[RMDB]
RNA sequence: GGGAACGACUCGAGUAGAGUCGAAAAUGGUCGCCCGCGCGCCCGCGGCCCAACCCGCCCAGCCGGGAAGUGCCGGCCGGUAGCAUCCGGUUCGGUCUGGCAGGCGGUCGCCAGGCCGAUCGGCGGCUCUCUACUCGUGAUUCGUCACGAGUAGAGAAAAAGAAACAACAACAACAAC
Reactivity to DMS in 0.01 (KOAc 150mM, MgCl2 10mM, bicine 150mM(pH8.5), 24C), signal-to-noise 1, nucleotides 027 to 126: u000g010g030u020c000g040c050c040c080g020c060g020c150g010c020c040c090g030c050g000g020c010c020c040a060a140c110c020c020g000c080c050c100a110g020c030c000g020g000g000a060a100g010u020g000c000c000g010g000c020c040g020g010u020a110g000c130a090u010c020c010g000g000u010u010c010g000g000u000c010u000g010g000c010a250g010g020c010g000g000u000c090g010c050c050a050g000g030c020c020g000a070u000c040g040g010c080g040g020c020

This 177-nucleotide RNA was probed chemically with DMS. The data come from the RNA Mapping Database (RMDB), library OK2TST. The reactions ran in a buffer of 150 mM KOAc, 10 mM MgCl2 and 150 mM bicine (pH 8.5), at 24 C.